[RMDB]
RNA sequence: GGGAACGACUCGAGUAGAGUCGAAAACGCACUUGCGACAUGAUCUGGAUGUCCAGACCUUCGGUGUCGUGAUCUUUCAGGUAUGUCUUGACCUUCUUGAUCAGCUCGUUCUCGUGCGGGCGGUACGCCCCGCCAGCACUUUCGAGUGCUGGCGGGGAAAAGAAACAACAACAACAAC
Reactivity to DMS in 0.01 (KOAc 150mM, MgCl2 10mM, bicine 150mM(pH8.5), 24C), signal-to-noise 2, nucleotides 027 to 126: c080g010c100a070c070u030u000g030c010g000a160c110a030u000g050a050u010c000u000g020g010a180u040g000u100c000c110a100g040a000c030c060u030u010c200g010g010u040g040u020c020g000u050g010a000u040c060u010u000u000c080a030g030g070u000a010u000g000u000c040u000u000g000a030c050c020u000u000c020u000u000g000a040u000c040a060g000c150u020c000g030u000u030c080u000c040g000u060g010c000g010g000g040c050g000g020u000a020c120g010
Reactivity to 2A3 in 0.01 (KOAc 150mM, MgCl2 10mM, bicine 150mM(pH8.5), 24C), signal-to-noise 8, nucleotides 027 to 126: c060g010c010a060c050u070u170g010c050g010a010c020a070u140g030a040u090c000u010g000g040a050u070g080u050c010c020a010g010a020c000c040u160u150c120g120g040u150g030u130c050g090u090g060a080u060c110u030u150u090c030a010g020g030u060a050u100g040u030c010u030u070g020a040c010c020u050u040c020u070u120g020a070u080c050a030g040c090u020c020g030u100u040c050u020c060g020u060g010c000g010g020g020c060g040g020u090a060c060g040